An RNA of 177 nucleotides, treated with 2A3 and DMS and read out base by base. Source: RMDB library RFMREP, as collected in RNAgym. Reactivities are given for positions 27 through 126. The reactions ran in a buffer of 150 mM KOAc, 10 mM MgCl2 and 150 mM bicine (pH 8.5), at 24 C.

RNA sequence: GGGAACGACUCGAGUAGAGUCGAAAAUAUACAAACAACCAUGUGUUCCACCGGCGUCACUGUAGGCUUCCUUCCAUGCCUACGGUUAGAUGCUUGAAUUUCUUUGGUGGCAUUCUGUCGACACAUGCGGUAAAACCAAGUUCGCUUGGUUUUACCGAAAAGAAACAACAACAACAAC
Reactivity to 2A3 in 0.01 (KOAc 150mM, MgCl2 10mM, bicine 150mM(pH8.5), 24C), signal-to-noise 2, nucleotides 027 to 126: u100a010u040a040c070a030a180a010c020a020a040c040c010a010u040g010u020g020u070u000c000c000a000c010c010g030g000c030g000u000c010a010c010u000g020u000a000g000g000c000u120u140c010c060u110u060c040c000a080u110g010c000c000u000a000c010g000g010u030u090a020g000a000u000g000c000u010u060g040a040a060u150u140u040c070u100u110u160g000g000u000g000g000c000a000u110u090c070u130g110u070c020g020a000c000a010c010a000u040g030
Reactivity to DMS in 0.01 (KOAc 150mM, MgCl2 10mM, bicine 150mM(pH8.5), 24C), signal-to-noise 2, nucleotides 027 to 126: u000a090u020a120c230a120a100a080c140a090a100c150c020a020u000g020u000g010u000u000c000c010a030c030c010g000g000c000g010u000c040a020c020u000g010u010a000g000g000c000u000u010c060c050u010u000c080c050a050u000g000c000c000u010a010c010g010g000u000u000a050g010a000u000g000c030u010u010g020a090a110u000u000u010c100u000u000u000g020g030u000g010g030c300a090u000u000c150u010g010u010c180g000a010c000a010c000a000u000g000